[RMDB]
This 177-nucleotide RNA was probed chemically with DMS and 2A3. The RNA was probed in 150 mM KOAc, 10 mM MgCl2 and 150 mM bicine (pH 8.5) at 24 C. The 2A3 profile rests on 9,199 reads. Source: RMDB library M2PK50, as collected in RNAgym. 2A3 adducts were read by reverse transcription with SuperScript II with manganese.

RNA sequence: GGGAACGACUCGAGUAGAGUCGAAAAGUUAACCCGUUCGCGGGUUAACAAAGAAACUGGAAGGCGGGGCGAGCUGCAGCCCCAGUGAAUCAUAUGCAGCAAAAACCGUAAGCUUCGGCUUACGGAACCUGAUUAAAUAGUUCGCUAUUUAAUCAGGAAAAGAAACAACAACAACAAC
Reactivity to DMS in 0.01 (KOAc 150mM, MgCl2 10mM, bicine 150mM(pH8.5), 24C), signal-to-noise 3, nucleotides 027 to 126: g010u010u000a000a000c000c010c000g020u000u010c170g050c000g020g010g000u000u000a000a000c000a050a100a130g010a090a130a090c060u000g000g030a100a090g020g020c100g010g000g000g010c000g010a110g010c010u000g010c010a210g000c000c000c010c010a030g010u010g000a070a060u010c110a020u000a050u010g000c010a010g040c010a070a020a070a080a080c000c010g000u000a010a010g010c000u000u010c240g030g010c000u000u000a000c000g000g020a010a020
Reactivity to 2A3 in 0.01 (KOAc 150mM, MgCl2 10mM, bicine 150mM(pH8.5), 24C), signal-to-noise 4, nucleotides 027 to 126: g000u000u000a010a010c020c010c010g000u030u050c220g020c020g060g010g000u000u000a000a000c000a000a000a000g010a020a130a010c100u120g060g110a090a020g140g050c080g040g020g000g000c000g000a050g000c000u010g000c010a000g000c020c010c000c010a000g020u050g100a020a010u080c040a030u100a020u240g000c000a010g000c010a020a010a020a030a030c010c000g000u000a000a000g000c010u030u160c290g060g000c000u000u020a000c000g000g000a000a010